[RMDB]
Conditions: 150 mM KOAc, 10 mM MgCl2 and 150 mM bicine (pH 8.5), 24 C. Chemical mapping of a 177-nucleotide RNA with 2A3 and DMS. Reactivities are rounded to 0.1 and cut off at 0 and 3. For DMS the reverse transcriptase was MarathonRT. For DMS, 11,878 sequencing reads were counted.

RNA sequence: GGGAACGACUCGAGUAGAGUCGAAAAGGACUUGUGGCCCCUGUAGAAGAGCAGCUUGGGCAGGGUGUGAUGGCCAUCUCUGUCUCUAGGGGCCCUGUGGAGGAGAGGCUGCAGCUAGAGGCUGGGCAAGGUUAAGACGAUUCGUCGUCUUAACCUUAAAAGAAACAACAACAACAAC
Reactivity to 2A3 in 0.01 (KOAc 150mM, MgCl2 10mM, bicine 150mM(pH8.5), 24C), signal-to-noise 5, nucleotides 027 to 126: g040g010a060c070u110u110g050u220g040g000c000c000c000c010u020g050u080a050g020a190a000g040a020g020c080a010g000c070u120u120g010g030g020c040a020g070g010g050u120g020u080g080a120u110g070g020c030c000a080u020c050u000c010u030g120u040c000u010c020u040a010g020g000g000g000c000c000c000u020g010u040g030g060a060g030g030a060g000a030g090g000c050u110g040c030a010g010c000u010a040g010a010g080g000c010u030g030g000g000c030
Reactivity to DMS in 0.01 (KOAc 150mM, MgCl2 10mM, bicine 150mM(pH8.5), 24C), signal-to-noise 4, nucleotides 027 to 126: g000g000a090c100u000u020g010u020g010g000c000c010c000c000u010g020u030a090g010a150a070g010a050g020c270a050g000c300u010u010g010g010g010c030a030g000g010g010u000g010u000g000a070u020g000g000c020c020a030u010c100u010c020u000g010u030c000u010c030u000a030g010g010g010g000c000c020c010u010g020u010g000g000a040g020g000a060g010a100g000g000c010u000g000c050a070g000c040u000a100g000a090g000g000c050u000g010g000g010c120